[RMDB]
RNA sequence: GGGAACGACUCGAGUAGAGUCGAAAAUUUGGGAGCAACUGACCAAGGUCCAGUUUUGUAAGAACCAGCCUCCUUCCGCCCUCUUGCUCUCCCAAGACAUCUGCGUUGACAGCCCUGUGUGUGCCUGUCGUAGCUCCUGAGGGUAUGUCUGUGAGCCAAGUAUUUACUAUUUCGAUAGUAAAUACUUAAAAGAAACAACAACAACAAC
Reactivity to 2A3 in 0.01 (KOAc 150mM, MgCl2 10mM, bicine 150mM(pH8.5), 24C), signal-to-noise 4, nucleotides 027 to 156: u090u050u060g010g000g000a020g010c030a040a060c040u060g030a040c030c030a070a050g060g000u050c040c020a020g020u040u050u100u130g100u110a110a070g010a080a040c020c020a030g030c000c020u040c010c000u100u030c040c030g020c000c010c000u020c010u030u070g010c010u010c010u010c000c010c010a030a010g040a040c020a050u050c080u110g050c030g110u080u070g020a030c010a010g010c010c010c020u120g030u050g020u020g010u030g130c000c020u040g010u050c010g020u050a010g000c000u000c000c010u030g030a030g010g010g020u070a170u040g010u000c040u030g090u050g050a020g050c050c030
Reactivity to DMS in 0.01 (KOAc 150mM, MgCl2 10mM, bicine 150mM(pH8.5), 24C), signal-to-noise 5, nucleotides 027 to 156: u010u010u010g000g000g020a070g020c050a070a060c040u010g010a100c050c040a090a100g030g010u000c030c050a110g020u000u000u000u000g020u020a130a140g000a060a080c040c030a100g010c030c020u000c030c010u000u000c050c030g040c030c020c020u000c020u000u010g010c030u000c030u010c020c010c010a070a130g010a100c050a080u000c050u010g010c060g020u010u000g010a070c030a080g010c010c010c030u000g010u000g030u010g020u000g020c040c020u000g010u010c060g020u000a090g030c030u000c010c020u010g010a080g010g010g040u000a070u010g010u000c030u000g010u000g000a110g010c040c140